[RMDB]
Conditions: 150 mM KOAc, 10 mM MgCl2 and 150 mM bicine (pH 8.5), 24 C. This 170-nucleotide RNA was probed chemically with DMS and 2A3. For 2A3, 7,479 sequencing reads were counted. High 2A3 reactivity points to a flexible backbone, as in loops and unpaired stretches. It was measured as part of the RMDB library 15KLIB. For DMS the reverse transcriptase was MarathonRT. Values cover nucleotides 27 to 129.

RNA sequence: GGGAACGACUCGAGUAGAGUCGAAAAUUGUUCCCCUUCGUCCUCUCCUCGUCUCGGAUUGGCUCAUUCUCAGGUCGGGCGAGGGUCCUCAGUUCUCUCUAUUCUUUCUUUUUGAAAGAGGAGACUGCCAGCCGAGUCUUCGGACUCGGCAAAAGAAACAACAACAACAAC
Reactivity to DMS in 0.01 (KOAc 150mM, MgCl2 10mM, bicine 150mM(pH8.5), 24C), signal-to-noise 2, nucleotides 027 to 129: u020u010g020u020u050c000c000c000c110u000u050c080g070u000c000c000u050c140u040c050c070u010c010g040u030c000u050c040g030g020a200u000u040g020g070c080u060c110a160u020u020c100u040c110a100g000g040u030c110g000g070g000c050g000a070g050g000g000u010c080c040u010c040a100g050u050u040c040u000c030u010c000u030a100u030u020c030u050u000u000c040u000u040u120u050u080g010a020a030a000g020a020g020g020a010g030a070c040u000g050c240c000a130
Reactivity to 2A3 in 0.01 (KOAc 150mM, MgCl2 10mM, bicine 150mM(pH8.5), 24C), signal-to-noise 5, nucleotides 027 to 129: u140u110g010u020u010c000c000c000c000u030u050c040g020u040c000c000u040c000u020c000c010u000c000g100u050c050u040c090g080g010a120u040u090g040g010c020u040c030a250u300u050c060u050c030a020g000g070u040c000g000g000g000c000g000a020g000g000g000u030c010c000u050c010a040g030u180u020c020u000c000u000c020u080a180u140u020c010u010u020u020c000u080u190u110u130u200g010a000a000a000g030a010g000g000a000g000a000c020u040g040c010c000a020